[RMDB]
RNA sequence: GGGAACGACUCGAGUAGAGUCGAAAAGAUAUGGAGGUCAGCAUACAGAGUUCGCAGUCCGAAGAACUUUGUCGGAAACGACAAAGGGAGGAUGAGGAACGACGAAGUAUGCUGACCUCCUAAGUCACUAAAGGGCAAAGUUCGCUUUGCCCUUUAGAAAAGAAACAACAACAACAAC
Reactivity to DMS in 0.01 (KOAc 150mM, MgCl2 10mM, bicine 150mM(pH8.5), 24C), signal-to-noise 2, nucleotides 027 to 126: g010a070u000a300u000g000g020a010g010g010u010c000a010g000c000a000u020a010c000a140g030a300g000u000u000c000g020c090a300g010u000c000c000g000a120a180g010a240a180c000u000u000u010g010u000c000g010g000a130a140a270c020g020a030c000a000a000a000g000g000g000a080g010g000a020u010g000a300g000g030a030a050c010g010a150c260g010a200a150g010u010a010u000g010c000u000g000a000c010c010u000c000c010u000a010a060g000u000c030a210